[RMDB]
RNA sequence: GGGAACGACUCGAGUAGAGUCGAAAAUGCAAGUAGUGCUAUUGUUGGAAUCACCGUACCUAUUUAGGUUUACGCUACAAGAUCGGUGGAUAGCAGCCCUAUCAAUAUCUAGGAGAACUGUGCUAUGAAAACGGUAUUGGCUUCGGCCAAUACCGAAGUAUGUCAGAGAGUUCGCUCUCUGACAUACAAAAGAAACAACAACAACAAC
Reactivity to DMS in 0.01 (KOAc 150mM, MgCl2 10mM, bicine 150mM(pH8.5), 24C), signal-to-noise 2, nucleotides 027 to 156: u000g010c080a070a100g020u000a080g040u000g030c020u000a060u000u000g010u030u000g000g010a140a100u000c020a030c050c020g000u010a030c010c020u000a190u010u000u000a040g030g010u010u000u000a080c120g030c080u000a120c000a090a070g000a060u000c020g010g030u030g030g010a100u010a080g030c000a080g000c030c030c000u000a120u030c050a080a130u000a070u000c110u000a070g010g010a090g000a030a050c050u010g010u000g020c060u020a040u000g020a080a070a160a130c010g010g000u000a000u000u010g000g010c000u010u000c300g060g030c000c010a020a010u000a020c000c000g040a000a060
Reactivity to 2A3 in 0.01 (KOAc 150mM, MgCl2 10mM, bicine 150mM(pH8.5), 24C), signal-to-noise 3, nucleotides 027 to 156: u160g020c060a020a070g060u050a030g070u120g040c030u110a050u100u100g050u050u080g040g000a050a080u080c010a010c010c000g040u080a040c000c000u080a160u270u110u140a000g000g020u010u070u080a060c050g010c000u060a030c010a090a050g040a120u060c000g020g000u000g020g050a070u030a020g000c030a010g000c040c000c000u040a030u130c050a090a030u060a040u260c070u020a030g010g050a130g000a160a050c050u080g030u030g070c010u050a030u150g120a030a060a030a040c010g000g000u000a000u000u010g000g010c010u000u000c170g020g000c000c000a000a000u000a000c000c000g000a000a000